[RMDB]
RNA sequence: GGGAACGACUCGAGUAGAGUCGAAAAAAGAAACAUUGUUUAUGCAAAGGCACUUCGCAAUGUGUGCUCAAACAUUGCUUAGUCAAACACGCUUCACAAUGUGCGACAAAGAAACAUUGUUAUAAGAUCCACUAAGUCGCCUUCGGGCGACUUAGAAGCCACAUAGUAUGUUCGCAUACUAUGUGGCAAAAGAAACAACAACAACAAC
Reactivity to DMS in 0.01 (KOAc 150mM, MgCl2 10mM, bicine 150mM(pH8.5), 24C), signal-to-noise 1, nucleotides 027 to 156: a180a130g000a150a070a040c040a010u000u000g020u020u000u000a080u020g130c000a050a160a130g030g000c040a090c000u010u000c150g070c010a040a040u000g000u010g030u010g050c200u000c190a160a080a040c000a000u000u000g050c000u000u000a060g010u010c040a080a050a090c060a180c180g030c010u000u000c090a040c030a060a000u000g000u000g020c100g030a140c060a070a030a070g020a220a050a060c020a090u000u000g000u000u010a080u000a070a080g010a190u000c040c020a130c000u000a000a000g040u000c000g040c000c030u000u030c300g020g000g050c000g010a000c010u010u000a000g010a070a120
Reactivity to 2A3 in 0.01 (KOAc 150mM, MgCl2 10mM, bicine 150mM(pH8.5), 24C), signal-to-noise 3, nucleotides 027 to 156: a000a010g150a010a040a020c050a030u050u040g050u110u150u120a110u200g020c040a030a070a040g100g010c060a000c010u000u010c030g000c000a010a000u000g000u000g040u070g070c060u040c140a060a100a000c000a000u000u000g000c010u010u020a000g020u030c020a000a100a040c070a030c070g000c000u040u030c040a010c010a030a010u010g000u050g010c010g050a050c070a040a150a050g080a010a030a010c030a010u010u040g020u050u050a110u020a170a090g040a080u040c030c000a020c030u000a000a000g000u000c000g010c000c000u050u090c100g060g010g000c000g000a020c000u000u000a000g000a000a000